Description
Conditions: 150 mM KOAc, 10 mM MgCl2 and 150 mM bicine (pH 8.5), 24 C. Chemical mapping of a 177-nucleotide RNA with 2A3 and DMS. For DMS the reverse transcriptase was MarathonRT. The 2A3 profile rests on 3,145 reads. 2A3 adducts were read by reverse transcription with SuperScript II with manganese.
RNA sequence: GGGAACGACUCGAGUAGAGUCGAAAAGAUAUGGACGUGCCAUGGAGUCGGUGGUCGGAAACGACCAUUCGACGUUGAAAUGGACACGUCCUAAGUCAAAAUCCGGACUGUGUUCGCACAGUCCGGAGACCCACUAUCUCUUCGGAGAUAGUGGGUCAAAAGAAACAACAACAACAAC
Reactivity to 2A3 in 0.01 (KOAc 150mM, MgCl2 10mM, bicine 150mM(pH8.5), 24C), signal-to-noise 1, nucleotides 027 to 126: g000a000u030a000u060g010g010a000c000g000u040g020c000c010a000u020g120g160a130g010u000c000g000g000u020g000g000u000c020g000g010a030a000a010c000g000a010c020c020a020u170u280c010g020a000c000g010u040u180g060a020a010a020u000g020g030a060c000a000c000g000u000c000c000u000a000a000g010u000c010a000a000a010a300u030c000c000g010g020a000c000u000g000u020g030u050u090c200g060c140a000c010a000g000u010c000c000g000g000a010
Reactivity to DMS in 0.01 (KOAc 150mM, MgCl2 10mM, bicine 150mM(pH8.5), 24C), signal-to-noise 2, nucleotides 027 to 126: g000a040u000a080u010g000g000a020c000g050u000g000c010c000a030u020g030g010a060g000u000c000g050g020u000g000g010u000c000g020g000a010a020a070c000g000a030c000c000a000u000u020c020g040a000c000g060u010u010g080a070a300a020u000g000g000a130c000a000c000g000u010c000c000u000a010a050g000u020c000a100a060a110a300u010c010c000g010g000a050c000u000g000u000g000u000u000c300g020c000a010c000a010g020u010c000c000g000g020a010